Structure probing data (2A3 and DMS) for a 207-nucleotide construct. It was measured as part of the RMDB library ARCHII. For DMS the reverse transcriptase was MarathonRT. Conditions: 150 mM KOAc, 10 mM MgCl2 and 150 mM bicine (pH 8.5), 24 C. Values cover nucleotides 27 to 156.
[RMDB]
RNA sequence: GGGAACGACUCGAGUAGAGUCGAAAACAACGUUCUGAGGGAUGUAUAUUUCACAGCGGGGUUUGGCAACUAAACUUCGAGAGGGUCAAGUAACGUAAAAGGCGUUGCUAGUGGGCAGUGCUGACCUCUGGACCGGCGAUCCGCGACGAGAGACGCCCAGACCAUAGAUGUUCGCAUCUAUGGUCUGAAAAGAAACAACAACAACAAC
Reactivity to 2A3 in 0.01 (KOAc 150mM, MgCl2 10mM, bicine 150mM(pH8.5), 24C), signal-to-noise 2, nucleotides 027 to 156: c020a010a050c020g030u060u030c040u080g030a040g000g010g020a020u030g060u090a080u030a060u130u270u130c080a050c020a070g030c010g000g000g010g000u030u030u090g050g000c020a050a010c070u160a070a030a000c020u040u040c070g030a040g020a030g060g000g010u030c020a010a060g000u000a010a010c000g000u010a000a030a000a230g170g010c000g010u010u020g000c010u050a090g110u120g010g060g040c020a040g010u000g070c040u050g050a040c000c020u000c010u030g000g020a050c050c030g000g000c010g030a080u000c000c030g020c050g050a050c030g030a050g000a000g000a060c010g030c010c000
Reactivity to DMS in 0.01 (KOAc 150mM, MgCl2 10mM, bicine 150mM(pH8.5), 24C), signal-to-noise 1, nucleotides 027 to 156: c060a090a090c040g020u000u000c030u020g000a070g030g020g030a120u020g000u000a040u000a060u020u020u000c020a090c080a150g020c060g040g020g010g000u030u000u000g020g000c230a080a090c070u000a040a060a090c060u010u000c030g010a120g000a130g020g030g030u000c060a080a110g050u000a030a020c020g030u000a180a100a060a190g000g000c010g020u000u000g030c020u000a060g010u010g010g070g020c010a070g010u000g000c020u000g000a130c020c020u000c030u020g050g010a080c030c000g000g000c050g010a190u000c040c040g010c010g020a120c040g030a090g010a090g000a120c020g000c000c060